[RMDB]
RNA sequence: GGGAACGACUCGAGUAGAGUCGAAAAGUAGAAUCUGUCAAGCAAAACCCCAAAACCUUACACUGAGAGCAUUUAGCCUGAUUACUCUUUAAAUCAAAUCAGGCGAUAGAGAGAAACUCGAGAGGUGAAACGGGAGUAAUGUUCGCAUUACUCCCAACUCUGAUUGCAUGUUCGCAUGCAAUCAGAGAAAAGAAACAACAACAACAAC
Reactivity to 2A3 in 0.01 (KOAc 150mM, MgCl2 10mM, bicine 150mM(pH8.5), 24C), signal-to-noise 1, nucleotides 027 to 156: g040u050a000g020a160a100u030c080u070g100u040c070a040a070g020c070a100a070a050a190c020c000c030c020a070a050a080a120c050c040u070u070a120c070a010c070u100g030a030g010a000g040c040a000u050u040u060a020g000c000c000u010g000a010u000u050a010c010u050c020u080u300u080a020a080a100u250c070a020a030a000u000c000a000g010g020c010g010a000u030a000g030a000g000a000g020a030a040a020c020u020c050g070a090g030a020g050g060u040g040a120a080a000c170g010g000g000a020g030u020a000a000u000g030u000u050c180g000c040a000u000u000a010c000u020c040c000c000a000a000
Structure probing data (2A3) for a 207-nucleotide construct. The RNA was probed in 150 mM KOAc, 10 mM MgCl2 and 150 mM bicine (pH 8.5) at 24 C. The 2A3 profile rests on 634 reads. It was measured as part of the RMDB library M2RFPK.